Chemical mapping of a 177-nucleotide RNA with DMS and 2A3. Reactivities are rounded to 0.1 and cut off at 0 and 3.
RNA sequence: GGGAACGACUCGAGUAGAGUCGAAAACUCAAGGCCUUCGGGCCUUGAGAAAAGGCAUCGUAUCUUUGGUUCGAAGCCAAACAUGAAACAUGAAAGCAGAGAAAAGUUUUGGGUUCGCCCAAAACAACGAAAGAUUUAUGUUCGCAUAAAUCUUUCGAAAAGAAACAACAACAACAAC
Reactivity to DMS in 0.01 (KOAc 150mM, MgCl2 10mM, bicine 150mM(pH8.5), 24C), signal-to-noise 4, nucleotides 027 to 126: c000u000c010a000a020g010g010c010c010u000u010c190g050g030g010c000c000u000u000g010a020g010a020a060a080a140g000g000c040a090u010c040g010u000a040u000c010u010u000u010g030g010u000u000c070g020a080a080g020c010c010a050a110a140c080a060u010g000a120a070a080c090a050u010g010a110a100a080g010c110a050g000a150g000a070a090a090a090g020u000u000u000u000g000g000g010u000u010c250g020c020c000c000a000a000a000a000c010a040a100
Reactivity to 2A3 in 0.01 (KOAc 150mM, MgCl2 10mM, bicine 150mM(pH8.5), 24C), signal-to-noise 4, nucleotides 027 to 126: c010u000c000a000a010g010g000c010c040u140u200c300g070g020g000c020c000u000u000g000a010g000a000a020a000a010g010g000c020a030u020c040g020u100a030u020c050u100u150u220g050g000u040u040c030g020a040a000g000c010c000a020a060a030c040a030u170g120a160a100a010c030a020u120g070a220a090a020g050c070a020g080a030g060a150a060a050a090g010u010u020u010u000g010g010g010u050u090c170g110c000c000c000a000a000a010a000c000a000a010